[RMDB]
An RNA of 177 nucleotides, treated with 2A3 and read out base by base.
RNA sequence: GGGAACGACUCGAGUAGAGUCGAAAAUGAAUCAUUUGGAUUUGUAGAUGCCUUAAGAUUAUUCAAUGAAGAAGAAUCUUUUUCAUACUGGAAAAAUAAGGAAGAAAACGAUGGUGCACGUUAAGAAGCCGGUAAUUACGUUCGCGUAAUUACCGGCAAAAGAAACAACAACAACAAC
Reactivity to 2A3 in 0.01 (KOAc 150mM, MgCl2 10mM, bicine 150mM(pH8.5), 24C), signal-to-noise 1, nucleotides 027 to 126: u270g000a000a000u060c020a090u020u000u230g100g000a010u040u000u040g100u180a060g000a070u080g100c000c000u000u150a110a000g080a080u260u020a100u020u010c000a000a260u060g040a100a000g000a000a000g110a100a130u270c060u000u080u000u000u000c000a000u020a150c090u080g020g000a010a100a010a010a010u210a010a000g030g000a160a000g130a020a000a040a000c060g000a020u040g030g000u120g000c100a000c050g030u020u000a060a070g030a190a000

Record summary: 2A3 adducts were read by reverse transcription with SuperScript II with manganese. For 2A3, 368 sequencing reads were counted. The reactions ran in a buffer of 150 mM KOAc, 10 mM MgCl2 and 150 mM bicine (pH 8.5), at 24 C.